This 177-nucleotide RNA was probed chemically with 2A3 and DMS. For 2A3 the reverse transcriptase was SuperScript II with manganese. The reactions ran in a buffer of 150 mM KOAc, 10 mM MgCl2 and 150 mM bicine (pH 8.5), at 24 C.
[RMDB]
RNA sequence: GGGAACGACUCGAGUAGAGUCGAAAAUCUGUCGUAGGAGAGAUGGCGCCAAAUGCAAUCAUAUUGGUUUGGUACUAAUUAUGGUAGAAUUAAAGCUAAGCCAAUUUGGGCACCGGGUUUCAUCUCUGUAUCUUAUGCAGUUCGCUGCAUAAGAUACAAAAGAAACAACAACAACAAC
Reactivity to 2A3 in 0.01 (KOAc 150mM, MgCl2 10mM, bicine 150mM(pH8.5), 24C), signal-to-noise 1, nucleotides 027 to 126: u040c030u040g180u110c090g130u170a150g010g270a050g010a000g000a020u010g000g000c040g020c010c020a020a080a010u100g000c010a000a200u110c010a010u000a020u010u010g000g010u000u000u000g000g000u030a020c000u010a070a060u000u110a070u180g180g040u150a120g130a190a010u030u030a000a050a030g000c020u020a000a000g000c000c000a000a000u010u020u040g040g000g000c010a010c040c000g000g050g000u010u010u060c000a010u000c010u000c030u040
Reactivity to DMS in 0.01 (KOAc 150mM, MgCl2 10mM, bicine 150mM(pH8.5), 24C), signal-to-noise 2, nucleotides 027 to 126: u000c050u000g010u000c110g000u000a160g030g030a080g010a020g000a010u010g000g000c110g010c000c000a040a090a230u000g000c000a070a110u060c020a020u000a050u000u000g000g000u000u000u000g000g010u010a110c300u000a010a010u000u000a100u000g010g020u000a120g000a050a000u000u000a000a080a300g010c000u000a000a030g010c000c010a000a020u000u000u000g010g020g010c020a020c260c300g010g030g010u000u000u000c010a020u000c000u000c010u000